[RMDB]
RNA sequence: GGGAACGACUCGAGUAGAGUCGAAAAGGCGGCGAAGGCUGCAAACCCCGGUGCGAUUACUGUUCAUGAAGCUCAGGGUGCUACAUUUACUGAGACUACGAUUAUUGCCACGGCAGACGCCCGUGGGCGACAGGCUAUCUUUCGAGAUAGCCUGUCGAAAAGAAACAACAACAACAAC
Reactivity to DMS in 0.01 (KOAc 150mM, MgCl2 10mM, bicine 150mM(pH8.5), 24C), signal-to-noise 4, nucleotides 027 to 126: g010g020c020g030g010c010g010a170a080g000g000c020u000g030c020a030a090a150c050c000c010c080g020g020u000g020c060g030a100u010u010a080c060u010g000u000u010c070a110u010g010a130a100g010c020u000c010a040g010g010g020u010g010c110u010a070c110a050u000u000u020a100c030u020g020a060g000a120c050u000a120c110g010a100u000u000a100u000u010g000c020c010a000c010g000g000c040a200g030a150c210g010c150c000c020g010u000g010g010g000
Reactivity to 2A3 in 0.01 (KOAc 150mM, MgCl2 10mM, bicine 150mM(pH8.5), 24C), signal-to-noise 2, nucleotides 027 to 126: g060g000c000g000g000c050g100a120a030g180g000c020u000g000c020a030a040a190c010c040c000c000g090g060u070g040c070g020a110u050u170a170c040u050g030u060u100c050a030u120g170a090a020g000c020u000c040a030g040g060g020u050g090c030u160a160c020a090u090u080u070a110c000u010g030a000g070a090c010u080a070c110g090a080u000u140a120u150u260g050c000c000a030c000g010g020c060a090g040a300c130g040c000c040c010g020u070g020g030g000